[RMDB]
RNA sequence: GGGAACGACUCGAGUAGAGUCGAAAAGGAAGCACAGUAACCACCUGGCAAGAUCGAUGAGGCAUGGGUGGUCCUUCUGGAGAAAAUGUCUUCGACAAAGCGACCAAUGUUUCAUGGCUGGCAUGAAUAUUUUACUCCACUUCGGUGGAGUAAAAUAAAAAGAAACAACAACAACAAC
Reactivity to 2A3 in 0.01 (KOAc 150mM, MgCl2 10mM, bicine 150mM(pH8.5), 24C), signal-to-noise 1, nucleotides 027 to 126: g060g010a100a050g040c040a000c020a110g010u070a010a020c010c000a010c040c000u040g090g000c050a070a020g020a200u100c150g050a070u070g060a060g060g030c080a090u050g050g020g020u010g030g000u040c020c000u030u040c020u040g000g000a080g070a020a080a020a000u160g060u000c050u080u080c080g010a010c040a020a030a000g010c020g060a010c030c000a030a080u110g020u000u100u040c000a020u010g040g010c000u020g050g010c020a110u060g060a050a000
Reactivity to DMS in 0.01 (KOAc 150mM, MgCl2 10mM, bicine 150mM(pH8.5), 24C), signal-to-noise 2, nucleotides 027 to 126: g010g000a080a100g010c070a070c120a060g020u000a070a110c030c050a110c040c000u000g010g000c030a100a080g020a080u010c080g000a060u020g010a080g010g010c010a020u010g010g000g040u000g000g000u000c050c020u000u000c120u000g020g010a170g000a030a030a030a120u010g000u020c050u010u000c000g000a170c040a070a080a060g010c050g020a060c060c000a050a080u010g010u000u000u000c000a050u000g000g010c030u000g010g020c030a050u000g000a090a100
An RNA of 177 nucleotides, treated with 2A3 and DMS and read out base by base. For 2A3 the reverse transcriptase was SuperScript II with manganese. High 2A3 reactivity points to a flexible backbone, as in loops and unpaired stretches. Reactivities are given for positions 27 through 126.